[RMDB]
RNA sequence: GGGAACGACUCGAGUAGAGUCGAAAAGUCAUGCUGUGGCGCUGCUCGCGCAUGAACAGCACGGCCAGCAGCUGAUCGCCGCUGUCGCUGGUAAAGGGCUCGAUGCUCAGCUCUGCGCGCAGCUCGCGUCUAUGCUUGAAUUCGUUCAAGCAUAGACAAAAGAAACAACAACAACAAC
Reactivity to DMS in 0.01 (KOAc 150mM, MgCl2 10mM, bicine 150mM(pH8.5), 24C), signal-to-noise 8, nucleotides 027 to 126: g000u010c040a060u010g010c020u000g010u000g010g000c020g010c030u010g010c050u000c080g030c080g020c040a050u000g010a050a080c070a030g000c010a060c060g010g010c020c030a060g010c030a050g020c010u000g000a090u010c140g010c050c080g010c030u000g000u010c100g010c000u000g000g020u010a060a140a120g000g010g010c000u010c150g010a100u000g010c040u000c050a080g000c030u000c060u000g000c050g000c040g000c080a030g000c010u000c110g000c140
Reactivity to 2A3 in 0.01 (KOAc 150mM, MgCl2 10mM, bicine 150mM(pH8.5), 24C), signal-to-noise 8, nucleotides 027 to 126: g030u020c010a040u110g010c020u040g020u060g150g000c010g000c040u060g000c030u040c090g000c010g000c020a060u150g050a030a020c010a010g000c020a010c030g020g000c020c010a020g000c010a000g000c040u070g050a150u160c080g040c100c020g000c040u030g080u130c070g010c060u020g000g050u140a180a150a090g050g000g000c040u060c110g120a090u150g000c010u020c060a010g010c010u030c050u050g010c010g000c000g000c010a000g010c010u030c040g040c020
An RNA of 177 nucleotides, treated with DMS and 2A3 and read out base by base. The 2A3 profile rests on 20,238 reads. Reactivities are given for positions 27 through 126. Source: RMDB library OK2TST, as collected in RNAgym.